[RMDB]
RNA sequence: GGGAACGACUCGAGUAGAGUCGAAAAACAUGCGUGUUCGCACGCAUGUAAAAACCGUAGGCACUCAAGAUUUACGAAGAACUAUGCUUCGAAAGAGGCAUAGGGAGUAAUCUUGAGGUGCCUAAACGGAAAAAACUCGAUGUUUCGACAUCGAGAAUCUUAGUACGUCGUUCGCGACGUACUAAGAAAAAGAAACAACAACAACAAC
Reactivity to 2A3 in 0.01 (KOAc 150mM, MgCl2 10mM, bicine 150mM(pH8.5), 24C), signal-to-noise 3, nucleotides 027 to 156: a000c000a000u000g000c010g040u040g050u140u170c300g020c170a000c000g000c020a000u010g010u010a040a000a000a010a020c010c000g000u020a020g010g040c000a000c000u010c000a000a000g010a020u120u170u110a060c050g160a300a020g000a010a000c000u000a010u010g000c010u010u000c000g050a100a050a020g000a000g000g010c000a000u010a000g000g000g000a010g000u000a010a000u000c000u000u000g000a010g000g010u000g020c000c000u010a000a010a000c000g000g090a050a050a030a080a010a050c000u030c020g000a000u000g040u030u120u150c300g070a020c010a000u000c010g000a000g020a010a020
Reactivity to DMS in 0.01 (KOAc 150mM, MgCl2 10mM, bicine 150mM(pH8.5), 24C), signal-to-noise 1, nucleotides 027 to 156: a070c000a010u000g010c000g010u000g040u000u010c300g050c000a000c070g000c000a040u000g020u000a060a080a050a090a170c000c000g020u000a040g000g010c010a060c000u000c000a000a020g030a040u000u000u000a010c010g000a100a160g000a250a250c000u030a000u000g010c030u000u010c010g020a120a170a240g000a010g000g020c000a000u000a000g000g000g000a260g000u000a030a070u010c000u000u000g000a000g030g020u010g100c000c000u000a000a000a090c010g010g000a020a060a050a090a080a090c020u000c000g010a050u000g040u000u000u000c300g010a120c010a000u010c000g000a000g000a040a030

Source: RMDB library RNAMAK, as collected in RNAgym. Structure probing data (2A3 and DMS) for a 207-nucleotide construct. Values cover nucleotides 27 to 156. The 2A3 profile rests on 2,067 reads. The RNA was probed in 150 mM KOAc, 10 mM MgCl2 and 150 mM bicine (pH 8.5) at 24 C.